[RMDB]
Conditions: 150 mM KOAc, 10 mM MgCl2 and 150 mM bicine (pH 8.5), 24 C. This 177-nucleotide RNA was probed chemically with 2A3. Reactivities are given for positions 27 through 126. The 2A3 profile rests on 499 reads. The data come from the RNA Mapping Database (RMDB), library OK1LIB.

RNA sequence: GGGAACGACUCGAGUAGAGUCGAAAAGAUGACGAAAAUUGGACGAAUCUUGAACAUUAGUGCUACUUGGGACGGCACUUUAUCAAAUAUGAAUCUUUAAAAACGUCACAACAGAUAAUCCAAUAGAGCCCUGCUACAAGUUCGCUUGUAGCAGGGCAAAAGAAACAACAACAACAAC
Reactivity to 2A3 in 0.01 (KOAc 150mM, MgCl2 10mM, bicine 150mM(pH8.5), 24C), signal-to-noise 1, nucleotides 027 to 126: g070a020u000g000a010c040g030a000a030a050a190u030u000g000g000a000c000g000a040a040u110c260u220u160g000a200a090c040a280u020u020a000g000u000g000c000u000a020c000u150u300g130g050g000a200c170g010g000c000a000c000u000u000u000a100u000c000a010a000a010u140a100u100g140a220a000u080c000u110u230u120a050a050a000a000a000c000g000u000c000a000c000a010a010c000a050g030a160u110a210a160u000c000c110a000a010u050a000g100a000